[RMDB]
RNA sequence: GGGAACGACUCGAGUAGAGUCGAAAACCUCAUAUCAUCAGCCCUUUGCCUCCCACCUCUCAUCAUAUGGGAAGUCUGGUAUUUAUGAGUGUUAGACUAUUUAGCCAAAGCUGUGAACUUUAAUGUACAUUGUAGUAUCGUUCGCGAUACUACAAUGAAAAGAAACAACAACAACAAC
Reactivity to 2A3 in 0.01 (KOAc 150mM, MgCl2 10mM, bicine 150mM(pH8.5), 24C), signal-to-noise 7, nucleotides 027 to 126: c010c020u050c040a120u110a050u080c030a020u010c020a020g020c040c000c000u080u100u100g050c010c020u030c010c000c000a030c010c020u020c010u020c010a100u010c010a030u060a060u250g030g000g010a010a030g020u010c020u040g030g010u050a120u030u120u010a140u150g130a040g030u050g030u050u030a010g010a010c010u030a070u150u160u090a030g000c010c010a060a040a010g030c040u040g020u040g110a040a030c020u060u150u200a150a070u170g020u050a040
Reactivity to DMS in 0.01 (KOAc 150mM, MgCl2 10mM, bicine 150mM(pH8.5), 24C), signal-to-noise 9, nucleotides 027 to 126: c020c010u000c090a060u010a070u000c070a050u010c060a080g000c080c040c040u010u000u010g020c050c030u000c020c010c030a070c080c050u000c030u000c050a060u000c130a070u010a300u000g000g000g010a040a040g010u000c030u000g010g010u000a050u000u000u000a040u020g000a040g010u000g010u000u000a070g010a090c030u000a120u010u000u010a070g020c010c040a050a090a110g010c050u000g010u000g010a080a100c080u000u000u000a060a080u010g010u000a160